Record summary: An RNA of 207 nucleotides, treated with 2A3 and DMS and read out base by base. 2A3 adducts were read by reverse transcription with SuperScript II with manganese. The reactions ran in a buffer of 150 mM KOAc, 10 mM MgCl2 and 150 mM bicine (pH 8.5), at 24 C. For DMS the reverse transcriptase was MarathonRT. Values are in units of 0.01, from 0 to 300, in steps of 10.
RNA sequence: GGGAACGACUCGAGUAGAGUCGAAAAACUAACAAAAGUUACGUUUAACCGUAUUCUAGAUUUAAUAAAUAGUCGAGUAGUCAGACAAAUGUUGACGAAGUACUUUAGGCGUGAAGGUGAAUAUGUUUAUGUAACAACCUGGACCUUUAAAAUGUUAGAGAUCGAUAAUGUUCGCAUUAUCGAUCUCAAAAGAAACAACAACAACAAC
Reactivity to 2A3 in 0.01 (KOAc 150mM, MgCl2 10mM, bicine 150mM(pH8.5), 24C), signal-to-noise 2, nucleotides 027 to 156: a000c010u060a040a000c020a040a090a090a040g010u030u020a020c040g000u000u100u120a150a040c050c010g010u010a040u080u010c010u080a030g010a230u100u130u130a150a160u140a040a060a060u090a040g010u050c010g010a000g000u040a000g030u000c030a000g060a230c030a020a130a080u220g050u110u020g030a000c000g020a060a010g030u110a020c010u060u050u060a050g000g070c020g030u060g050a040a020g060g010u090g020a040a000u040a030u040g010u030u040u040a170u090g040u050a040a000c000a000a050c040c000u000g030g100a040c010c000u070u040u090a090a150a040a010u130g020u030u060a030
Reactivity to DMS in 0.01 (KOAc 150mM, MgCl2 10mM, bicine 150mM(pH8.5), 24C), signal-to-noise 1, nucleotides 027 to 156: a090c050u000a090a110c050a080a070a170a200g010u000u000a010c030g000u050u000u010a100a090c030c080g020u010a000u000u000c000u000a120g000a270u000u000u000a080a150u000a070a080a160u000a020g000u000c000g020a140g000u000a200g030u000c000a090g050a270c070a100a070a070u000g020u010u020g010a150c000g000a070a100g040u000a000c070u000u000u000a120g030g000c090g120u000g010a080a050g020g030u010g000a100a050u000a020u020g000u000u000u000a080u070g010u000a100a030c010a050a120c030c000u000g030g000a130c070c000u030u000u000a010a010a050a100u000g010u000u000a270